[RMDB]
RNA sequence: GGGAACGACUCGAGUAGAGUCGAAAAUCUACGUGACGCCUCCUCAAUUCCAUUUCCUUACACUGCCACAUUUCUCGAUCGCGAAAUGAUGCGUUGGCCGGAGAUCGAAUCCGAGCCGCUGGCAGGCGGCUAUCGUCCCUUUCGAGGGACGAUAGCCAAAAGAAACAACAACAACAAC
Reactivity to 2A3 in 0.01 (KOAc 150mM, MgCl2 10mM, bicine 150mM(pH8.5), 24C), signal-to-noise 9, nucleotides 027 to 126: u030c020u040a050c030g070u060g040a030c020g020c000c000u020c010c010u040c030a040a100u070u020c020c020a030u030u040u070c010c010u040u050a050c090a020c060u030g010c010c010a030c010a030u020u080u000c050u020c030g290a300u170c110g000c010g070a030a020a030u080g060a080u150g060c030g080u110u190g020g000c000c000g020g000a030g020a060u210c100g100a080a060u000c000c000g020a040g020c000c010g000c010u000g020g000c000a000g010g020c020
Reactivity to DMS in 0.01 (KOAc 150mM, MgCl2 10mM, bicine 150mM(pH8.5), 24C), signal-to-noise 4, nucleotides 027 to 126: u010c010u010a030c080g040u010g010a040c070g020c050c020u000c020c000u010c030a050a120u010u010c020c050a100u010u000u020c010c010u010u020a100c190a140c010u010g020c020c000a210c040a080u000u000u000c010u010c020g000a120u020c130g030c160g000a030a020a010u000g000a110u010g000c110g000u010u030g010g000c010c020g010g000a000g000a110u040c210g000a130a170u000c000c000g000a110g000c000c000g000c010u010g000g010c000a030g000g010c200

The data come from the RNA Mapping Database (RMDB), library OK1LIB. The record gives the reactivity of an RNA of 177 nucleotides to 2A3 and DMS. For DMS the reverse transcriptase was MarathonRT. Reactivities are given for positions 27 through 126. The RNA was probed in 150 mM KOAc, 10 mM MgCl2 and 150 mM bicine (pH 8.5) at 24 C. The 2A3 profile rests on 10,031 reads.